[RMDB]
RNA sequence: GGGAACGACUCGAGUAGAGUCGAAAACGCUUCCAGAUUGAGCCGAAGGGCCGCAAGCCAAAGGAAGUCGUGAACACCAGCAGUAAAAUGAUGUUCACCAACCACUUUAAUGCGUUGCCACUCGAUGAAAACCAGCGUCGUUAUCUGGUGGUAUCCAUGUCCUACACGAGUUCGCUCGUGUAGGACAAAAAGAAACAACAACAACAAC
Reactivity to 2A3 in 0.01 (KOAc 150mM, MgCl2 10mM, bicine 150mM(pH8.5), 24C), signal-to-noise 2, nucleotides 027 to 156: c050g000c030u090u000c000c000a020g000a070u080u090g070a030g060c050c000g040a040a070g050g060g000c000c000g020c020a080a100g080c040c050a020a020a040g000g010a010a000g100u090c010g040u010g000a000a000c010a010c020c000a000g030c010a020g240u300a140a170a070a130u030g020a050u040g000u000u000c000a000c030c010a010a020c000c020a090c000u050u060u090a060a070u090g000c010g100u100u170g000c000c000a070c000u010c060g060a080u100g080a000a090a090a140c060c000a020g020c020g170u080c040g020u090u020a010u000c000u020g000g030u000g000g010u010a020u050c010c080a090
Structure probing data (2A3) for a 207-nucleotide construct. For 2A3, 722 sequencing reads were counted. Source: RMDB library OK3TST, as collected in RNAgym. Conditions: 150 mM KOAc, 10 mM MgCl2 and 150 mM bicine (pH 8.5), 24 C.